[RMDB]
RNA sequence: GGGAACGACUCGAGUAGAGUCGAAAAUGGCCUGGAGGUGAGAACUUGAAGGCUCUAUCCUUUUGGGACUACAGUCCUGCCCAUCUUACGGAGGGUCCAAUUGUUAAAUGGAAACUAGUUCUUCAAGGCAAACUGGCUUCACCUUUGAUGGGGAGUGUCCCUCAUGAGAGUUCGCUCUCAUGAGGGAAAAAGAAACAACAACAACAAC
Reactivity to 2A3 in 0.01 (KOAc 150mM, MgCl2 10mM, bicine 150mM(pH8.5), 24C), signal-to-noise 1, nucleotides 027 to 156: u060g060g050c000c000u030g090g000a040g010g010u060g030a110g010a040a020c030u090u100g100a110a070g040g000c010u000c010u020a140u060c000c000u090u030u060u080g050g000g010a030c010u060a030c190a120g050u040c000c000u000g010c010c000c000a020u000c010u040u060a050c050g040g000a040g020g010g030u060c070c010a160a210u060u000g010u160u110a070a000a010u150g000g010a010a040a040c060u020a140g150u060u010c020u120u060c060a050a030g060g010c000a140a060a050c130u000g000g000c000u010u030c060a140c020c010u050u020u020g070a100u050g000g000g060g040a050g050u100g040